[RMDB]
RNA sequence: GGGAACGACUCGAGUAGAGUCGAAAAGAAGAAGCCGGACCAACAUGCGCAGCGAGUAAAUUCCGGUCACGACUACCGCCACGACGCCGAGCGCCGUCGCCGGCCACAGUGGCAAGAAGCAGAACGCUGCGAAUACCAAUGCCGAUGCGGGCAGGAACAUGGUAACCUUAUUCGUAAGGUUACCAUGAAAAGAAACAACAACAACAAC
Reactivity to DMS in 0.01 (KOAc 150mM, MgCl2 10mM, bicine 150mM(pH8.5), 24C), signal-to-noise 2, nucleotides 027 to 156: g000a160a130g000a150a110g020c000c020g000g010a120c090c030a060a150c060a110u000g030c050g050c010a090g000c030g030a150g030u000a090a110a150u020u000c030c010g020g020u010c050a080c030g000a140c030u020a100c060c040g000c010c040a060c010g010a170c190g000c010c020g020a140g050c020g050c000c300g000u010c030g030c010c020g020g020c000c080a050c120a230g030u000g000g020c000a040a020g000a080a150g010c030a160g000a080a190c030g010c030u000g040c000g000a060a130u010a130c030c020a070a110u010g040c000c030g000a140u000g030c120g020g010g030c010a060g000g010a120a250
Reactivity to 2A3 in 0.01 (KOAc 150mM, MgCl2 10mM, bicine 150mM(pH8.5), 24C), signal-to-noise 4, nucleotides 027 to 156: g070a070a020g010a030a000g050c010c010g000g030a030c030c060a050a060c070a160u200g040c020g000c010a000g000c000g030a030g110u130a050a130a060u130u000c020c030g010g000u040c040a030c070g130a010c040u140a080c030c080g000c000c000a010c010g030a020c010g010c000c020g090a140g100c020g120c250c090g230u260c060g020c020c020g000g000c000c010a060c020a010g000u010g000g000c010a010a000g030a030a010g020c080a020g030a110a030c010g000c010u000g000c000g000a000a010u070a010c020c010a020a140u070g020c000c020g080a050u210g070c110g030g030g000c010a010g020g030a040a030